Source: RMDB library OK2TST, as collected in RNAgym.
Chemical mapping of a 177-nucleotide RNA with DMS.
Conditions: 150 mM KOAc, 10 mM MgCl2 and 150 mM bicine (pH 8.5), 24 C.
DMS adducts were read by reverse transcription with MarathonRT.
RNA sequence: GGGAACGACUCGAGUAGAGUCGAAAAGUCACGAGAUACACCUCCAGGGCCUAAAGAAGUUAAUCGUCGUUUAUGUGUAAUUUCAGCUAAUGGAUUAAUUUGGUCCAUAAAUUGAGAAAGUGGAUUGGAUCCUUCUUCCUUUCGAGGAAGAAGGAUCAAAAGAAACAACAACAACAAC
Reactivity to DMS in 0.01 (KOAc 150mM, MgCl2 10mM, bicine 150mM(pH8.5), 24C), signal-to-noise 1, nucleotides 027 to 126: g000u010c060a100c040g010a120g000a120u030a090c080a030c060c020u000c020c100a130g000g000g010c000c020u000a060a100a080g000a080a060g010u010u000a030a010u010c000g020u000c100g010u000u000u010a030u000g000u000g040u020a060a080u020u010u010c060a050g010c150u000a100a010u010g010g000a020u000u000a030a140u010u000u010g040g030u000c010c000a040u000a030a050a140u020u000g010a080g020a070a060a200g010u000g000g020a100u000u010g000
Annotation:
Reactivities are given for positions 27 through 126. For DMS, 702 sequencing reads were counted.